RNA sequence: GGGAACGACUCGAGUAGAGUCGAAAAGAAAAAGCGAGUCCGAAAUAAGUAUGAGACCCGAUCGUACGAGGACGAGCGAAGGGGACCGUGACUCCGAAAGCCGAAAGGUGGUCGGAGGAAACGGGAAGGGAAAUCUAUUGUUCGCAAUAGAUUUCCCAAAAGAAACAACAACAACAAC
Reactivity to DMS in 0.01 (KOAc 150mM, MgCl2 10mM, bicine 150mM(pH8.5), 24C), signal-to-noise 6, nucleotides 027 to 126: g010a090a100a060a130a150g010c000g000a300g000u000c010c000g030a120a100a090u040a050a160g000u000a000u000g000a020g010a140c010c010c020g000a300u010c000g010u010a000c000g000a090g000g020a010c000g000a300g010c020g010a060a080g010g010g000g010a150c000c000g010u000g010a300c000u000c000c000g000a010a080a100g000c010c000g000a100a090a120g000g020u010g000g010u010c000g000g010a020g000g000a010a090a010c000g010g000g020a110a110
Reactivity to 2A3 in 0.01 (KOAc 150mM, MgCl2 10mM, bicine 150mM(pH8.5), 24C), signal-to-noise 4, nucleotides 027 to 126: g040a010a050a010a000a020g010c030g030a010g020u000c020c010g070a060a170a150u220a180a060g010u020a020u030g030a030g050a090c010c040c080g060a120u020c010g000u000a010c000g050a140g000g000a000c000g000a000g000c020g040a040a050g030g000g000g030a000c000c000g010u010g010a030c000u000c000c010g030a060a020a020g010c010c010g040a040a050a030g030g020u030g000g190u060c000g000g000a010g000g000a020a070a000c000g000g050g010a020a080